RNA sequence: GGGAACGACUCGAGUAGAGUCGAAAAGCAUUAAGAGUCACUUAUUGAUUGCAGCUCAAUUGGAAAUCUUCUGGCACAACAACACCAAAGACUCUGUUUUCUGUUGCAUUAGCUGUGUGCCAUGCUACACUAUUACGGCAUUCGUGCCGUAAUAGUGAAAAGAAACAACAACAACAAC
Reactivity to DMS in 0.01 (KOAc 150mM, MgCl2 10mM, bicine 150mM(pH8.5), 24C), signal-to-noise 7, nucleotides 027 to 126: g010c050a050u010u000a080a050g010a070g010u010c060a120c120u010u000a070u000u000g010a050u000u000g010c070a050g000c100u000c060a040a050u010u000g010g010a070a090a130u010c060u010u010c140u000g010g020c030a040c040a090a070c110a050a040c110a100c070c050a040a060a070g010a030c050u010c050u000g000u000u000u000u000c080u000g010u000u000g000c070a070u010u000a050g010c060u010g020u000g010u000g000c010c040a060u000g000c070u010a140
Reactivity to 2A3 in 0.01 (KOAc 150mM, MgCl2 10mM, bicine 150mM(pH8.5), 24C), signal-to-noise 4, nucleotides 027 to 126: g010c020a020u080u140a130a010g020a020g040u020c020a020c080u150u150a050u110u150g050a040u070u130g020c010a030g020c020u040c050a040a120u100u110g050g040a070a070a060u040c040u160u010c060u120g000g030c060a010c020a040a140c010a030a000c000a040c040c040a070a020a050g010a050c010u040c040u060g120u090u070u030u000c070u070g130u080u080g000c070a100u060u090a020g020c040u020g000u000g010u010g140c010c010a010u040g000c020u070a040